[RMDB]
RNA sequence: GGGAACGACUCGAGUAGAGUCGAAAACACGGGCCGGAUAUUCGGACACAUCGCGUGCUUUGGUGCGUGCCACCGCUCGGUGCAGAACGCGUGCGUCAUGGCCCCGAAAUCACCGUCGAACUACGCGUCAGGUAGCUUUUUUCGAAAAGCUACCUGAAAAAGAAACAACAACAACAAC
Reactivity to 2A3 in 0.01 (KOAc 150mM, MgCl2 10mM, bicine 150mM(pH8.5), 24C), signal-to-noise 3, nucleotides 027 to 126: c050a020c010g010g040g000c070c010g010g060a110u080a210u250u250c060g050g020a010c040a010c010a050u100c040g040c030g040u030g020c040u160u100u140g060g030u110g040c030g080u110g070c020c010a020c050c020g030c070u080c060g080g030u070g020c030a040g030a130a000c000g010c000g040u020g020c030g010u020c010a080u060g000g030c050c020c000c000g040a050a040a010u070c050a030c040c020g040u060c030g010a070a070c040u080a030c120g030c020g100
Reactivity to DMS in 0.01 (KOAc 150mM, MgCl2 10mM, bicine 150mM(pH8.5), 24C), signal-to-noise 3, nucleotides 027 to 126: c130a100c220g010g020g020c010c020g010g010a120u010a110u000u000c140g010g010a050c040a060c070a040u000c030g000c060g030u000g020c070u000u000u010g010g010u010g020c040g010u010g010c120c030a040c100c050g010c080u000c110g000g010u000g000c090a080g020a090a050c020g000c020g000u000g010c060g030u010c030a090u010g010g000c000c020c010c030g010a040a080a080u010c100a100c020c020g000u000c070g000a100a060c070u010a040c080g020c090g000